[RMDB]
RNA sequence: GGGAACGACUCGAGUAGAGUCGAAAAUUGUCAUCCUGCUGCAUCGACCCGACGCCUUUGACCGCGACGAUCCACGUGGGGGAGAAGCGGAUUUCAUUCUCGCCAAACACCGCAACGGUCCGACGAAAGUCGAUUCCAUGUUCGCAUGGAAUCGACUAAAAGAAACAACAACAACAAC
Reactivity to DMS in 0.01 (KOAc 150mM, MgCl2 10mM, bicine 150mM(pH8.5), 24C), signal-to-noise 2, nucleotides 027 to 126: u010u010g010u000c060a030u020c020c000u000g030c030u040g030c030a090u000c090g020a080c060c000c030g010a080c080g000c080c000u030u010u000g010a080c090c030g000c050g000a210c050g000a160u010c020c050a050c170g010u040g000g000g000g000g000a090g000a020a170g000c120g000g020a180u020u050u010c100a050u000u000c040u010c090g040c020c020a040a100a270c120a070c070c050g000c080a030a090c110g030g000u000c030c030g010a070c050g000a040a060
Reactivity to 2A3 in 0.01 (KOAc 150mM, MgCl2 10mM, bicine 150mM(pH8.5), 24C), signal-to-noise 4, nucleotides 027 to 126: u140u120g080u030c010a020u020c000c000u000g010c010u010g000c020a100u030c040g060a100c000c000c030g050a050c030g030c000c020u090u030u130g040a050c010c010g000c010g010a030c010g020a050u090c030c010a070c100g040u140g010g020g020g020g010a080g010a050a030g000c020g030g020a020u040u110u020c020a040u020u020c030u000c040g060c020c000a020a090a020c030a040c020c010g020c030a040a040c080g030g010u050c040c030g060a080c030g110a200a090
Record summary:
Source: RMDB library OK1LIB, as collected in RNAgym. Structure probing data (DMS and 2A3) for a 177-nucleotide construct. The RNA was probed in 150 mM KOAc, 10 mM MgCl2 and 150 mM bicine (pH 8.5) at 24 C.